[RMDB]
RNA sequence: GGGAACGACUCGAGUAGAGUCGAAAACCUGUUAUCUGACCAAUAACAGAAUGCACCACAGCGUAAAAUCACCUGAUUGGGUGAGUUGGUCGCACCGCCAUUUGACGAACGAACGCCAAGCCUAAGCACUACGAGUAUGUGUUCGCACAUACUCGAACUACAGAAUAUUGUUCGCAAUAUUCUGUAGAAAAGAAACAACAACAACAAC
Reactivity to 2A3 in 0.01 (KOAc 150mM, MgCl2 10mM, bicine 150mM(pH8.5), 24C), signal-to-noise 9, nucleotides 027 to 156: c010c000u000g010u000u010a020u010c010u010g020a020c020c000a020a020u010a020a000c000a010g070a090a080u160g020c030a030c040c010a040c060a040g040c030g060u100a060a070a050a120u060c010a040c010c010u140g090a280u130u250g070g000g000u020g000a030g010u030u090g010g000u020c010g000c030a020c010c020g020c020c020a060u060u060u140g060a040c040g020a110a010c030g020a050a010c030g030c020c010a040a020g010c010c020u100a090a020g040c040a040c120u150a050c060g000a000g000u000a000u000g020u000g020u030u070c170g010c050a000c000a000u000a000c000u000c000g000a010a010
Reactivity to DMS in 0.01 (KOAc 150mM, MgCl2 10mM, bicine 150mM(pH8.5), 24C), signal-to-noise 4, nucleotides 027 to 156: c060c000u000g010u000u010a010u000c010u000g020a100c070c080a290a020u000a030a040c010a020g010a150a140u000g020c040a100c010c030a060c040a070g030c060g020u010a060a040a100a090u000c000a060c010c000u010g010a170u000u000g020g000g020u000g000a110g000u000u000g020g000u000c010g000c050a070c030c000g000c030c010a130u000u000u000g010a070c040g030a060a090c100g020a070a080c050g000c010c020a030a120g010c030c020u000a070a080g010c040a110c050u000a160c010g010a030g000u000a010u010g030u000g020u000u000c300g000c020a030c000a010u000a000c010u000c000g000a010a080